[RMDB]
RNA sequence: GGGAACGACUCGAGUAGAGUCGAAAAUAAGCGCCAUCGCACACCGGCUGCUCGCGCGGGUCGAACAGGGUCGCCGAGUAGUACGGCACCUUGGGCGUCAUCGGAGCAAUGUCCGCCAGCGCCGCGGCAGCGGCGGACUGUUCGCAGUCCGCCGCUGAAAAGAAACAACAACAACAAC
Reactivity to 2A3 in 0.01 (KOAc 150mM, MgCl2 10mM, bicine 150mM(pH8.5), 24C), signal-to-noise 2, nucleotides 027 to 126: u140a060a010g030c020g040c080c020a060u110c030g000c020a050c000a030c040c020g010g040c000u020g010c010u020c000g070c000g040c040g020g010g140u060c030g030a120a050c070a130g040g020g210u040c060g000c000c010g030a020g060u140a030g040u140a190c020g000g000c010a030c010c010u060u080g100g000g000c010g030u050c020a040u080c020g040g020a010g040c000a070a110u130g080u070c000c030g020c020c000a040g040c030g000c040c080g030c000g000g000
Reactivity to DMS in 0.01 (KOAc 150mM, MgCl2 10mM, bicine 150mM(pH8.5), 24C), signal-to-noise 2, nucleotides 027 to 126: u010a070a170g010c070g030c040c070a080u000c100g010c070a100c110a170c110c010g000g000c010u000g000c000u000c030g020c140g010c050g000g000g000u010c000g000a090a120c120a100g000g010g010u000c110g020c000c000g000a070g030u000a030g000u010a040c000g010g000c120a050c010c030u000u000g000g010g000c000g010u000c060a100u010c020g020g000a070g000c050a080a110u010g000u000c000c010g000c060c060a180g000c060g020c070c070g000c020g000g000